[RMDB]
The record gives the reactivity of an RNA of 177 nucleotides to 2A3 and DMS. The reactions ran in a buffer of 150 mM KOAc, 10 mM MgCl2 and 150 mM bicine (pH 8.5), at 24 C. For 2A3, 3,916 sequencing reads were counted.

RNA sequence: GGGAACGACUCGAGUAGAGUCGAAAACCAUAACAGUUCGCUGUUAUGGACUGUCGGAAUGCGGAAUAAUUAAUCGUCCGCUUACGAUUAAUACGGACUAUAAAGCGUAACACUUCGGUGUUACGAAAUCCGAUCUUAUCUUCGGAUAAGAUCGGAUAAAAGAAACAACAACAACAAC
Reactivity to 2A3 in 0.01 (KOAc 150mM, MgCl2 10mM, bicine 150mM(pH8.5), 24C), signal-to-noise 4, nucleotides 027 to 126: c000c000a000u010a010a000c000a000g040u050u080c130g070c130u010g000u010u000a000u010g010g030a050c060u060g010u020c010g020g040a130a040u100g000c010g010g090a050a060u140a130a110u230u210a100a100u120c120g020u000c030c000g000c000u010u040a000c000g010a000u030u110a020a040u150a090c110g100g040a010c060u060a080u100a300a090a040g070c010g000u000a000a000c000a010c020u020u120c170g060g000u000g000u000u000a010c000g000a010a010
Reactivity to DMS in 0.01 (KOAc 150mM, MgCl2 10mM, bicine 150mM(pH8.5), 24C), signal-to-noise 3, nucleotides 027 to 126: c000c000a010u000a010a020c010a030g000u000u020c210g020c020u000g000u000u000a000u000g000g010a110c130u010g010u000c000g010g000a070a060u000g000c010g000g010a040a030u000a070a140u040u010a080a080u010c250g000u000c010c010g010c020u000u000a080c020g020a030u000u010a070a080u010a110c150g000g010a140c140u000a110u010a050a060a140g010c010g010u000a000a020c000a000c010u000u020c160g020g020u000g010u000u000a000c000g000a010a060
Background: Reactivities are given for positions 27 through 126. The DMS profile rests on 3,112 reads. Source: RMDB library M2PK50, as collected in RNAgym.